Record summary: The record gives the reactivity of an RNA of 207 nucleotides to 2A3. The RNA was probed in 150 mM KOAc, 10 mM MgCl2 and 150 mM bicine (pH 8.5) at 24 C. It was measured as part of the RMDB library OK3TST. 2A3 adducts were read by reverse transcription with SuperScript II with manganese.
[RMDB]
RNA sequence: GGGAACGACUCGAGUAGAGUCGAAAAUGGGACUACAGGCGCCUGCCACCAUGCCCGGCUAAUUUUUCGUAUUUUUAGUAGAAACAGCGUUUCACCGUGUUAGCCAGAAUGGUCUCGAUCUCCUCACCUCGUGAUCUGCUAGAGUGUGCUGGCGUGACCGGUGUUAUACGUUCGCGUAUAACACCGGAAAAGAAACAACAACAACAAC
Reactivity to 2A3 in 0.01 (KOAc 150mM, MgCl2 10mM, bicine 150mM(pH8.5), 24C), signal-to-noise 1, nucleotides 027 to 156: u170g000g010g120a030c150u160a050c110a110g190g110c010g000c030c040u020g000c040c020a020c030c030a060u110g010c010c010c020g050g030c000u010a040a120u110u020u140u060u130c020g020u030a230u040u080u110u020u080a110g050u090a030g070a030a030a000c060a120g130c030g060u000u130u110c070a070c150c040g020u030g000u000u010a000g030c020c010a010g050a040a030u100g000g000u000c000u010c010g050a050u040c080u070c050c000u090c010a050c010c020u020c000g010u000g030a020u020c000u020g000c050u060a080g010a060g160u070g000u060g020c000u020g000g010c020g000u020g000a020